[RMDB]
RNA sequence: GGGAACGACUCGAGUAGAGUCGAAAAGAUAUGGAUCCGGGUGCUCGAAGAACCAUAUACACAAGAAUUUUGUACAUCGGAAACGAUGUACUACUGUGUAUAUGGGGAGAGCGACGGAUCCUAAGUCCUUAAAUUAUGCGUUCGCGCAUAAUUUAAGAAAAGAAACAACAACAACAAC
Reactivity to 2A3 in 0.01 (KOAc 150mM, MgCl2 10mM, bicine 150mM(pH8.5), 24C), signal-to-noise 3, nucleotides 027 to 126: g050a040u130a030u270g030g000a020u010c050c050g130g280g300u160g010c000u040c000g300a300a060g010a050a010c000c000a000u010a000u010a000c020a000c010a130a230g200a300a290u260u300u300u300g000u000a000c010a000u020c000g000g030a040a040a080c000g000a000u010g010u000a000c000u010a000c010u000g000u000g000u020a000u000a000u000g000g020g000g010a010g000a000g000c000g020a010c000g000g000a000u000c000c010u000a010a010g010u040c020
Reactivity to DMS in 0.01 (KOAc 150mM, MgCl2 10mM, bicine 150mM(pH8.5), 24C), signal-to-noise 2, nucleotides 027 to 126: g030a130u000a210u000g000g000a010u000c010c000g000g020g060u000g030c020u000c010g020a160a240g020a170a240c000c010a020u000a000u000a010c000a030c000a050a060g050a170a210u010u000u010u000g010u020a000c000a010u000c000g010g000a180a100a270c000g010a020u000g000u000a010c000u010a110c110u000g000u000g000u000a000u000a000u010g000g010g000g010a040g000a000g020c000g010a070c020g000g010a010u010c000c000u010a010a110g000u000c040

Description: Source: RMDB library TTRINS, as collected in RNAgym. Structure probing data (2A3 and DMS) for a 177-nucleotide construct. The 2A3 profile rests on 3,652 reads.